RNA sequence: GGGAACGACUCGAGUAGAGUCGAAAAGUCGGGUCUACAAGGGCUCAGGGUCUCUGGGCUGGGCUGGGUUUACACUGGGAUCGGGUUUGGGCUAGGGUAGGGACACAAUGAUUAAAUGCUGGGCAAAGUGAUAACAGUGAUUCGUCACUGUUAUCACAAAAGAAACAACAACAACAAC
Reactivity to DMS in 0.01 (KOAc 150mM, MgCl2 10mM, bicine 150mM(pH8.5), 24C), signal-to-noise 2, nucleotides 027 to 126: g030u000c100g030g010g020u000c080u000a140c170a060a150g020g070g000c030u000c010a060g040g010g030u000c140u010c100u010g010g000g000c050u000g010g010g030c060u010g000g000g000u000u000u000a020c280a140c040u000g000g030g000a120u000c120g000g000g010u000u050u010g000g000g020c240u000a050g000g030g010u010a030g000g000g020a280c160a110c070a040a030u000g000a100u000u030a010a140a060u000g030c090u000g030g000g020c140a040a070a050

An RNA of 177 nucleotides, treated with DMS and read out base by base. DMS adducts were read by reverse transcription with MarathonRT. Source: RMDB library OK2TRN, as collected in RNAgym. The reactions ran in a buffer of 150 mM KOAc, 10 mM MgCl2 and 150 mM bicine (pH 8.5), at 24 C.